The record gives the reactivity of an RNA of 177 nucleotides to 2A3 and DMS. Conditions: 150 mM KOAc, 10 mM MgCl2 and 150 mM bicine (pH 8.5), 24 C. For DMS, 3,120 sequencing reads were counted.
RNA sequence: GGGAACGACUCGAGUAGAGUCGAAAAAUUAACACUUUCAACCGUUGGUGGUGUUAGAUGCCACUCGGUUUUAGCUUGCGGUGCUAACCAAAAGUUGAGCCAUUGUGUUUUAUCAUUAGCAUCAAACCCCCAUGUAAAUUUUCGAAUUUACAUGGGGAAAAGAAACAACAACAACAAC
Reactivity to 2A3 in 0.01 (KOAc 150mM, MgCl2 10mM, bicine 150mM(pH8.5), 24C), signal-to-noise 4, nucleotides 027 to 126: a000u170u080a050a010c010a010c050u080u150u140c040a050a030c010c020g080u100u120g020g030u010g020g010u030g040u050u080a100g020a100u220g030c000c010a000c010u020c030g000g000u050u030u050u030a000g000c010u010u030g010c030g050g020u040g050c050u080a060a090c010c010a020a000a020a010g000u030u020g020a010g040c020c060a130u080u090g020u010g020u040u050u060u140a120u080c050a080u070u180a020g020c010a020u080c030a020a060a220c010
Reactivity to DMS in 0.01 (KOAc 150mM, MgCl2 10mM, bicine 150mM(pH8.5), 24C), signal-to-noise 4, nucleotides 027 to 126: a100u000u000a030a040c030a030c050u000u000u000c220a060a050c050c000g010u000u000g010g010u010g010g030u010g000u000u010a120g010a120u000g010c020c010a000c020u000c050g000g020u000u000u000u000a040g010c030u000u000g020c300g020g000u010g010c160u020a070a080c030c020a060a230a030a060g010u000u010g000a050g000c070c090a050u010u000g010u000g020u000u000u000u010a050u000c110a110u000u000a030g010c030a050u000c040a070a090a160c240

It was measured as part of the RMDB library OK2TST. For DMS the reverse transcriptase was MarathonRT. Values cover nucleotides 27 to 126.